[RMDB]
RNA sequence: GGGAACGACUCGAGUAGAGUCGAAAAUGUGGUUAUCACUACAAAGAAUUAGGUUUAGUCAUGAAUAUGGAUGUUAGUCUCCAUAGACAUAGGCUCUCUCUUAAGGAGUUGAUGAUGUAUGCCGCUGUGAGGUCUGGGUUCGCCCAGACCAAAAGAAACAACAACAACAAC
Reactivity to 2A3 in 0.01 (KOAc 150mM, MgCl2 10mM, bicine 150mM(pH8.5), 24C), signal-to-noise 4, nucleotides 027 to 129: u100g030u000g000g030u050u080a040u110c020a010c030u050a020c070a000a190a010g100a030a090u040u040a040g080g000u070u020u070a000g000u000c030a010u010g040a050a070u030a010u000g000g030a020u100g090u100u200a100g060u030c020u000c020c000a000u000a010g020a040c000a010u040a060g000g000c000u000c000u000c000u020c000u000u000a010a020g010g030a050g090u040u020g040a120u010g010a000u030g020u070a030u160g020c020c020g030c030u010g020u040g110a070
Reactivity to DMS in 0.01 (KOAc 150mM, MgCl2 10mM, bicine 150mM(pH8.5), 24C), signal-to-noise 3, nucleotides 027 to 129: u000g020u000g020g000u030u010a040u020c030a120c040u000a000c020a040a080a110g000a160a080u050u030a040g000g000u000u000u040a030g020u000c020a000u030g000a040a120u070a020u000g010g000a060u060g010u040u060a180g000u040c100u000c000c010a060u030a010g000a100c040a000u000a100g000g020c020u010c080u000c050u030c020u000u000a050a080g020g000a040g030u000u000g020a080u000g020a000u010g030u000a020u000g030c030c020g000c050u020g050u010g030a130